Background
An RNA of 207 nucleotides, treated with 2A3 and DMS and read out base by base. The DMS profile rests on 2,193 reads. DMS adducts were read by reverse transcription with MarathonRT. The reactions ran in a buffer of 150 mM KOAc, 10 mM MgCl2 and 150 mM bicine (pH 8.5), at 24 C. DMS (dimethyl sulfate) methylates the pairing face of unpaired adenines and cytosines. The 2A3 profile rests on 1,246 reads.
RNA sequence: GGGAACGACUCGAGUAGAGUCGAAAACGGUAUUGGUCAAGGCUAUACCGACAGCGCACCUUCAAAAGGGCGCUUAACCCCCGGCCAAGCGCCGAAAUAUGAAUAGACACCGCUGGGCUGGUAGGGCAAAACAUGGCGAUCUUCGGAUCGCCAUGAACUACCAUCUGAAGUUCGCUUCAGAUGGUAGAAAAGAAACAACAACAACAAC
Reactivity to 2A3 in 0.01 (KOAc 150mM, MgCl2 10mM, bicine 150mM(pH8.5), 24C), signal-to-noise 3, nucleotides 027 to 156: c010g000g000u040a040u080u210g040g020u090c120a130a110g150g020c020u010a000u000a030c000c010g000a050c090a010g000c000g010c040a300c090c000u060u100c050a120a100a070a020g000g000g000c010g010c020u010u000a000a010c000c020c000c010c020g020g000c000c010a050a010g020c030g000c060c050g130a030a080a030u240a030u140g140a110a060u110a110g070a050c030a010c050c020g030c000u040g010g000g000c010u000g010g070u090a030g070g000g040c060a010a050a050a100c010a000u000g000g010c010g000a000u000c010u000u050c230g060g000a000u000c000g000c000c000a000u000g000a000a000
Reactivity to DMS in 0.01 (KOAc 150mM, MgCl2 10mM, bicine 150mM(pH8.5), 24C), signal-to-noise 1, nucleotides 027 to 156: c030g010g020u010a030u030u020g070g010u010c040a110a150g000g020c010u020a080u020a010c000c000g010a100c040a080g000c040g040c000a000c020c000u000u000c140a050a130a160a200g000g010g000c000g040c000u000u000a030a030c000c000c000c040c020g050g050c010c020a060a020g050c040g000c030c010g000a060a080a090u010a240u010g020a220a220u000a140g000a220c030a060c050c000g040c010u010g000g000g010c000u000g000g020u020a080g000g010g020c010a050a120a070a200c000a010u000g020g020c000g040a030u000c000u000u010c250g040g010a000u000c000g000c010c000a000u000g000a020a110